Chemical mapping of a 170-nucleotide RNA with 2A3 and DMS. It was measured as part of the RMDB library 15KLIB. For DMS the reverse transcriptase was MarathonRT. Values cover nucleotides 27 to 129. For 2A3 the reverse transcriptase was SuperScript II with manganese. The RNA was probed in 150 mM KOAc, 10 mM MgCl2 and 150 mM bicine (pH 8.5) at 24 C. The 2A3 profile rests on 9,829 reads.
[RMDB]
RNA sequence: GGGAACGACUCGAGUAGAGUCGAAAAGGCCUCUUUCCAGGUCCGGAGUCUACUUCCAUCUGGACCACCCGGGCCUUCUUCGCCGGGGGCGCCCCUUCUCCGUCCCUAUCCUUCUUUCCGAUUAUUCACCCGCGAAGCUUCGGCUUCGCGAAAAGAAACAACAACAACAAC
Reactivity to 2A3 in 0.01 (KOAc 150mM, MgCl2 10mM, bicine 150mM(pH8.5), 24C), signal-to-noise 5, nucleotides 027 to 129: g020g010c010c000u050c050u050u110u050c060c060a050g000g000u000c030c010g000g000a010g020u040c040u140a110c080u200u060c070c040a150u020c070u050g010g000a010c000c000a030c010c030c010g000g030g000c000c000u020u010c040u010u040c020g050c030c020g010g000g000g000g020c020g040c000c010c000c000u000u050c000u010c020c000g050u030c020c000c000u060a090u090c000c000u040u040c000u020u060u030c010c020g050a060u050u040a080u140u130c030a110c040c010
Reactivity to DMS in 0.01 (KOAc 150mM, MgCl2 10mM, bicine 150mM(pH8.5), 24C), signal-to-noise 4, nucleotides 027 to 129: g000g000c050c030u060c080u030u060u020c000c000a090g030g000u000c010c030g030g010a100g010u050c090u020a130c110u010u000c150c100a140u050c130u030g030g000a020c000c030a140c110c060c090g000g000g000c030c050u000u000c070u030u000c080g040c080c090g020g000g050g070g010c000g000c020c030c000c070u080u040c000u050c040c040g030u050c020c040c050u060a120u050c040c040u010u040c080u000u000u000c010c010g060a100u010u010a120u030u030c070a110c070c020